The record gives the reactivity of an RNA of 207 nucleotides to 2A3.
RNA sequence: GGGAACGACUCGAGUAGAGUCGAAAAACAUAUUACGAUAUGAUUCAGAUGGUGUCUUACUGGUUCGUACCAAGGGACAUAAUGGUUUCUUGUUUCCAACCACAGAACAAGUGGCGAGCCUGAAUAAAAAACUGACUGCCGUUCGCGGCAGUCAGAACGAUACGUAGACCUUCGGGUCUACGUAUCGAAAAGAAACAACAACAACAAC
Reactivity to 2A3 in 0.01 (KOAc 150mM, MgCl2 10mM, bicine 150mM(pH8.5), 24C), signal-to-noise 2, nucleotides 027 to 156: a020c050a020u190a030u090u190a050c080g050a020u030a050u170g090a090u050u120c070a040g110a150u100g040g110u040g010u020c020u030u100a160c010u020g010g000u030u090c080g000u060a020c040c000a020a020g010g010g000a010c030a020u160a030a130u140g060g050u020u020u000c000u020u010g050u050u060u020c020c000a030a050c000c010a030c010a060g140a140a050c010a180a040g000u000g100g000c030g030a020g040c000c070u060g090a070a030u190a120a050a000a000a000a030c000u000g000a000c000u000g000c010c000g000u010u060c230g000c000g100g000c000a020g000u020c000a000g000a000a000
Annotation
Source: RMDB library M2RFPK, as collected in RNAgym. The RNA was probed in 150 mM KOAc, 10 mM MgCl2 and 150 mM bicine (pH 8.5) at 24 C.